[RMDB]
Description:
An RNA of 177 nucleotides, treated with 2A3 and DMS and read out base by base. The reactions ran in a buffer of 150 mM KOAc, 10 mM MgCl2 and 150 mM bicine (pH 8.5), at 24 C.
RNA sequence: GGGAACGACUCGAGUAGAGUCGAAAAGAUAUGGAUGGUCGAGUAGACAUGAUUACGAUUCGGAAACGAAUCUAUAAUCAACAGCUACUGACCAUCCUAAGUCAAAACGACGUGUUCGCACGUCGAAGCUGGAAUGACCGUUCGCGGUCAUUCCAGCAAAAGAAACAACAACAACAAC
Reactivity to 2A3 in 0.01 (KOAc 150mM, MgCl2 10mM, bicine 150mM(pH8.5), 24C), signal-to-noise 2, nucleotides 027 to 126: g010a020u030a010u090g030g000a000u030g000g080u070c130g230a020g010u020a010g030a170c180a230u280g010a030u030u010a030c030g010a000u000u010c040g020g010a000a030a070c010g010a000a000u060c000u020a050u080a020a020u000c030a030a260c150a140g130c010u000a010c000u000g020a010c000c000a010u000c000c000u000a000a000g020u000c060a000a020a060a120c020g000a010c000g000u010g090u000u160c300g050c130a020c030g000u000c020g020a010a010
Reactivity to DMS in 0.01 (KOAc 150mM, MgCl2 10mM, bicine 150mM(pH8.5), 24C), signal-to-noise 1, nucleotides 027 to 126: g000a000u010a200u000g000g000a030u000g010g000u010c000g070a000g020u000a050g010a110c140a170u010g010a120u000u000a090c300g040a010u000u000c000g020g000a120a020a140c000g050a070a000u000c000u000a130u030a040a000u000c020a010a050c300a200g010c000u000a000c000u000g000a030c010c000a000u010c000c000u000a000a090g000u000c020a150a000a080a120c020g020a030c000g010u020g020u060u000c300g020c000a000c000g000u010c000g020a040a030
As a SHAPE reagent, 2A3 marks flexible, mostly unpaired nucleotides at the ribose 2'-OH. Source: RMDB library TTRDES, as collected in RNAgym.